[RMDB]
RNA sequence: GGGAACGACUCGAGUAGAGUCGAAAAAGCUAUAGUGCACUACGGUGCACUAUAGCACGGCGAUGAGGAGAUACCAACCGUAUUGAGUUAUAGUGAUAUUUCUUAUACGCUAUUCUGAGCCGAUAAACAUGACAAAUCACUUCGGUGAUUUGUCAUGAAAAGAAACAACAACAACAAC
Reactivity to 2A3 in 0.01 (KOAc 150mM, MgCl2 10mM, bicine 150mM(pH8.5), 24C), signal-to-noise 5, nucleotides 027 to 126: a000g000c000u000a000u000a000g000u000g020c000a000c030u050a020c280g090g000u010g010c000a000c000u000a010u000a000g000c010a000c000g010g000c000g050a080u050g020a020g070g030a090g040a050u140a180c000c030a050a020c020c030g030u030a080u030u200g070a080g030u050u030a030u030a020g080u090g100a100u030a030u060u050u010c030u020u040a010u020a030c000g000c030u040a070u070u010c040u040g060a000g000c000c000g000a040u190a040a080a000
Reactivity to DMS in 0.01 (KOAc 150mM, MgCl2 10mM, bicine 150mM(pH8.5), 24C), signal-to-noise 4, nucleotides 027 to 126: a090g000c010u000a000u000a020g010u000g000c010a010c000u010a080c230g030g000u000g000c000a000c000u000a000u000a000g000c010a040c080g000g010c000g010a180u040g000a060g040g000a090g030a100u030a110c120c110a070a120c300c040g010u010a020u010u050g000a080g020u000u010a020u000a010g010u040g000a100u000a000u000u000u000c000u000u010a040u000a020c010g000c080u010a120u010u000c010u000g000a300g000c030c000g000a090u020a060a110a110
The record gives the reactivity of an RNA of 177 nucleotides to 2A3 and DMS. Values cover nucleotides 27 to 126. The reactions ran in a buffer of 150 mM KOAc, 10 mM MgCl2 and 150 mM bicine (pH 8.5), at 24 C. It was measured as part of the RMDB libraries RFM100 and RFMREP. For DMS the reverse transcriptase was MarathonRT. 2A3 is a SHAPE reagent: it acylates the 2'-hydroxyl of flexible nucleotides of all four kinds.